[RMDB]
RNA sequence: GGGAACGACUCGAGUAGAGUCGAAAAUUGGUGUGGCUGGAUUAUGUCAAAUGAUCAAACCAACAGUCAUUGAUUGGUACAUUAGCGAAUAUACUCCAAAACCAGCAUGGAUGCAAGCCACCAAAGCAUCCGGAGGAAUGUUCGCAUUCCUCCGGAUAAAAGAAACAACAACAACAAC
Reactivity to DMS in 0.01 (KOAc 150mM, MgCl2 10mM, bicine 150mM(pH8.5), 24C), signal-to-noise 2, nucleotides 027 to 126: u020u010g040g020u000g020u000g030g030c020u000g000g010a070u010u000a020u010g000u000c070a080a070a020u000g010a060u000c270a100a120a090c060c030a010a080c030a090g000u010c200a120u000u000g000a140u000u010g020g010u000a050c110a030u000u000a090g000c120g020a140a030u000a050u000a070c080u000c070c020a010a060a120a240c000c060a030g020c170a060u000g030g010a050u000g030c020a120a070g010c050c010a040c020c030a020a060a090g000c120
Reactivity to 2A3 in 0.01 (KOAc 150mM, MgCl2 10mM, bicine 150mM(pH8.5), 24C), signal-to-noise 2, nucleotides 027 to 126: u010u060g010g020u050g010u030g050g000c000u000g080g020a010u000u040a010u100g050u110c050a000a000a180u030g000a040u080c110a150a140a030c000c000a000a010c000a040g160u150c090a100u120u170g140a170u040u060g000g000u030a050c010a060u070u020a030g030c040g050a080a000u110a040u050a140c020u000c000c020a030a120a020a020c000c000a020g050c030a020u140g080g100a020u050g000c030a030a020g030c070c010a010c000c030a020a080a000g040c000

This 177-nucleotide RNA was probed chemically with DMS and 2A3. For 2A3, 1,207 sequencing reads were counted. The data come from the RNA Mapping Database (RMDB), library OK2TRN. For DMS, 1,246 sequencing reads were counted. Reactivities are given for positions 27 through 126.